An RNA of 177 nucleotides, treated with DMS and 2A3 and read out base by base.
2A3 adducts were read by reverse transcription with SuperScript II with manganese.
Source: RMDB library OK2TST, as collected in RNAgym.
RNA sequence: GGGAACGACUCGAGUAGAGUCGAAAAGUCUGACGCAAUCUGCGAGAGGUUUUUGCGAUCGUCAGGCGACAAAUGCAUCUCCAUUAAAGAGCCACCGCCUUGCUGGCUCCAGUCACUCUGCGAGGCAACGGCGCAGUAUAUUCGUAUACUGCGCCGUAAAAGAAACAACAACAACAAC
Reactivity to DMS in 0.01 (KOAc 150mM, MgCl2 10mM, bicine 150mM(pH8.5), 24C), signal-to-noise 1, nucleotides 027 to 126: g000u000c000u010g000a020c010g010c140a100a050u010c010u000g060c020g040a040g010a170g040g000u000u000u000u000u010g030c010g010a010u000c030g010u000c020a020g000g000c030g010a050c170a060a050a030u020g000c120a090u000c020u010c010c020a080u000u010a090a190a130g000a020g020c000c000a010c100c070g000c010c020u000u000g010c010u000g000g010c000u000c020c070a060g000u000c100a050c070u000c060u000g000c030g030a010g000g000c000a160
Reactivity to 2A3 in 0.01 (KOAc 150mM, MgCl2 10mM, bicine 150mM(pH8.5), 24C), signal-to-noise 2, nucleotides 027 to 126: g000u030c000u010g000a000c000g000c050a100a130u050c110u300g020c030g030a030g050a070g210g050u100u130u060u090u180g040c010g000a010u060c000g000u020c000a010g000g020c000g000a010c000a020a070a010u140g010c020a080u020c030u030c010c050a050u070u200a170a150a050g000a010g020c000c050a020c040c050g030c000c010u000u000g000c000u020g020g000c000u000c010c000a030g050u050c010a030c080u120c070u050g020c000g010a000g010g000c010a000